[RMDB]
RNA sequence: GGGAACGACUCGAGUAGAGUCGAAAAAAUAUUGAACUUAUGCAUUCAAUGAGCAGAGGAUGGAGAGGGCCAAUGAAAUUGACUAUACAGUCUAUUAUGAACAAUAAGCAGCAAUGUAAAUUGAAAGUAAUUAAAAUGUAUAAUCCGUCAGUUAAAAGACAUCAUUUAGGUUCGCCUAAAUGAUGUCAAAAGAAACAACAACAACAAC
Reactivity to 2A3 in 0.01 (KOAc 150mM, MgCl2 10mM, bicine 150mM(pH8.5), 24C), signal-to-noise 3, nucleotides 027 to 156: a000a000u210a030u040u040g000a030a010c020u100u080a050u280g030c030a070u040u040c030a000a080u080g010a040g050c020a020g030a040g010g030a020u050g010g000a040g010a010g030g010g000c020c020a030a050u050g040a040a030a040u060u060g000a000c000u000a030u060a130c020a030g030u040c030u020a040u050u010a040u120g060a040a020c020a020a030u110a130a030g000c010a000g010c030a060a020u040g000u060a090a180a100u030u040g050a220a150a040g010u020a000a010u020u100a060a100a010a010u070g020u010a020u020a020a070u080c040c050g060u040c030a020g030u050u140a030a040a000a090
Reactivity to DMS in 0.01 (KOAc 150mM, MgCl2 10mM, bicine 150mM(pH8.5), 24C), signal-to-noise 1, nucleotides 027 to 156: a020a010u000a060u010u010g000a080a040c020u000u030a080u000g010c060a150u000u000c030a040a030u000g000a130g030c040a080g010a180g020g010a060u020g000g010a030g070a110g000g000g030c140c030a040a050u020g010a030a050a060u020u000g010a020c040u000a050u000a070c010a020g010u020c030u000a030u000u000a010u030g010a140a300c050a010a030u010a060a300g050c020a030g010c230a050a150u000g020u010a020a190a130u000u020g020a030a080a300g000u000a020a030u000u000a020a030a010a060u000g010u030a060u010a030a070u000c030c020g030u010c060a080g020u010u000a040a070a060a190

Background:
The record gives the reactivity of an RNA of 207 nucleotides to 2A3 and DMS. For DMS the reverse transcriptase was MarathonRT. It was measured as part of the RMDB library OK3TST. For DMS, 1,862 sequencing reads were counted. Reactivities are given for positions 27 through 156. The 2A3 profile rests on 1,836 reads.